[RMDB]
RNA sequence: GGGAACGACUCGAGUAGAGUCGAAAAGAUAUGGACGCAUCGGGAGCUGAUGGUUCGGAAACGAACCUGCCAGCGAAGAACGAGUGCGUCCUAAGUCAAAAGAGGUGUAGGUUCGCCUACACCUCAAGGAUAGCAAUAGCUUCGGCUAUUGCUAUCCAAAAGAAACAACAACAACAAC
Reactivity to DMS in 0.01 (KOAc 150mM, MgCl2 10mM, bicine 150mM(pH8.5), 24C), signal-to-noise 2, nucleotides 027 to 126: g010a010u000a040u020g000g000a020c010g030c000a010u000c000g020g010g000a010g030c000u000g030a240u000g000g000u000u020c000g010g000a010a010a020c010g030a000a000c010c000u000g020c300c020a020g010c010g020a090a120g000a180a220c010g000a030g010u000g010c000g000u000c000c010u010a000a030g000u010c000a090a040a120a120g000a010g000g040u000g000u000a000g010g010u010u020c200g020c000c000u010a010c000a000c000c000u000c010a000a030
Reactivity to 2A3 in 0.01 (KOAc 150mM, MgCl2 10mM, bicine 150mM(pH8.5), 24C), signal-to-noise 3, nucleotides 027 to 126: g000a010u030a010u020g000g000a000c000g000c000a010u000c020g000g040g000a000g040c000u030g040a210u140g090g030u010u020c010g000g000a000a010a000c000g000a000a010c020c000u050g180c170c020a000g010c010g070a200a010g000a010a000c010g020a050g160u050g000c000g000u000c000c000u000a000a000g000u000c010a020a020a080a150g020a000g020g010u010g010u000a000g030g020u030u120c270g130c080c000u010a000c000a000c000c010u000c010a000a000